[RMDB]
RNA sequence: GGGAACGACUCGAGUAGAGUCGAAAAACAUGCUGGCCAACCCAACCCCACGAUCCUCCAUCGGCAUGAUCAUGAUGUGUUCUCAAAUAUCAGGCCAGUAAAUCACCAUGCUGGUGCUGGUAAAGGCAACUUAUGCCCAAGUUCGCUUGGGCAUAAAACGAACACUUAUGUUCGCAUAAGUGUUCGUAAAAGAAACAACAACAACAAC
Reactivity to DMS in 0.01 (KOAc 150mM, MgCl2 10mM, bicine 150mM(pH8.5), 24C), signal-to-noise 2, nucleotides 027 to 156: a150c050a090u000g010c020u010g000g000c010c040a080a130c060c000c050a100a080c030c020c000c020a140c010g010a090u010c020c010u000c060c020a040u010c030g010g050c010a030u010g010a010u000c100a130u000g010a060u020g000u000g000u000u000c030u010c030a090a070a140u010a060u000c050a060g020g000c020c000a010g010u000a000a050a110u010c070a070c090c060a050u000g020c020u000g030g190u000g030c010u000g010g040u010a030a060a120g030g000c020a050a080c130u000u010a010u000g000c000c000c000a010a010g030u000u000c300g050c020u010u010g020g010g010c010a010u000a000a010a070
Reactivity to 2A3 in 0.01 (KOAc 150mM, MgCl2 10mM, bicine 150mM(pH8.5), 24C), signal-to-noise 4, nucleotides 027 to 156: a000c020a030u090g020c010u030g020g010c020c010a040a030c030c010c040a000a060c010c010c010c010a100c060g070a090u050c000c010u020c010c030a050u020c000g000g000c020a010u030g020a040u060c070a060u090g070a020u060g060u020g030u110u010c060u000c020a050a080a010u180a060u080c050a030g000g000c000c000a000g000u010a010a060a050u070c020a020c070c010a020u050g000c010u000g000g040u040g210c010u010g000g010u050a130a090a060g070g030c010a050a020c050u020u020a000u000g000c010c000c000a000a000g000u020u050c070g050c100u000u000g050g000g000c000a000u000a000a000a000